[RMDB]
RNA sequence: GGGAACGACUCGAGUAGAGUCGAAAACGGCAAAAAAGCAAACUUGACCACCAAGGAUAAAAGAGAUCUUAUCCAAGGAUGCAAAAGAUAAUCUCACUUUUGACACCCACUGAUCUCGAACUUAACGAAAACCGAGACUACUUCGGUAGUCUCGGAAGUGAUGAAUAGCGUUCGCGCUAUUCAUCACAAAAGAAACAACAACAACAAC
Reactivity to 2A3 in 0.01 (KOAc 150mM, MgCl2 10mM, bicine 150mM(pH8.5), 24C), signal-to-noise 4, nucleotides 027 to 156: c020g030g000c020a020a010a010a030a110a030g100c070a050a070a060c050u080u070g050a160c000c020a020c020c020a060a020g060g010a030u030a070a040a030a030g010a000g000a000u000c000u050u030a040u040c050c040a050a050g020g000a030u050g000c010a000a020a020a020g030a090u120a200a240u190c060u030c120a040c030u010u020u000u050g070a040c010a030c010c020c000a050c080u060g010a020u030c000u000c020g020a070a070c090u150u150a060a020c070g080a070a030a010a030c010c000g000a000g010a000c000u000a000c000u030u030c100g040g000u000a010g010u000c000u000c000g000g000a000a000
Reactivity to DMS in 0.01 (KOAc 150mM, MgCl2 10mM, bicine 150mM(pH8.5), 24C), signal-to-noise 1, nucleotides 027 to 156: c110g040g000c130a010a140a040a080a040a090g040c010a160a130a080c110u000u010g020a260c060c010a090c020c020a040a220g040g000a110u000a030a050a040a180g020a100g010a070u040c000u000u000a090u000c050c090a020a240g000g020a020u000g030c050a000a010a020a010g020a130u000a110a160u000c120u000c070a180c000u000u000u000u000g000a110c050a050c020c000c000a210c100u000g010a000u000c000u000c000g000a040a100c060u010u000a070a060c020g000a040a070a070a160c000c000g000a020g000a010c010u000a000c000u000u020c300g030g040u000a000g010u000c000u010c000g000g000a000a070